[RMDB]
RNA sequence: GGGAACGACUCGAGUAGAGUCGAAAAUUGCGGUAGAGCACAUAGAAUGGGACCCGAAAGGUUGUGAACUAUGCUUGAGGAAGGCGAAGCCAGGGGAAACUCUGGUGGAGGCUUGUCGCAAUGCUGAUUUUUUACAGUAGUUCGCUACUGUAAAAAAAAAAGAAACAACAACAACAAC
Reactivity to DMS in 0.01 (KOAc 150mM, MgCl2 10mM, bicine 150mM(pH8.5), 24C), signal-to-noise 9, nucleotides 027 to 126: u000u000g010c010g010g010u010a070g010a050g010c060a100c150a080u010a030g000a100a120u010g010g010g000a030c010c000c030g020a100a130a250g010g020u000u000g010u010g000a080a100c040u000a050u000g000c020u010u000g010a140g010g000a080a030g010g000c010g000a300a260g000c000c000a000g010g000g010g000a150a090a150c000u000c010u000g000g010u000g000g000a300g000g000c000u000u000g000u010c010g010c010a010a010u010g000c060u000g000a030
Reactivity to 2A3 in 0.01 (KOAc 150mM, MgCl2 10mM, bicine 150mM(pH8.5), 24C), signal-to-noise 5, nucleotides 027 to 126: u010u020g010c000g020g030u080a040g050a010g090c030a030c020a120u070a030g100a100a090u110g020g020g050a020c010c020c050g070a060a050a010g070g010u070u070g250u070g150a030a010c030u010a020u070g010c030u030u040g030a050g110g100a050a020g070g050c010g000a000a000g000c000c000a000g010g000g000g000a010a030a060c000u010c000u000g000g000u010g000g000a010g050g020c000u000u020g060u030c000g000c000a010a010u100g020c020u030g090a120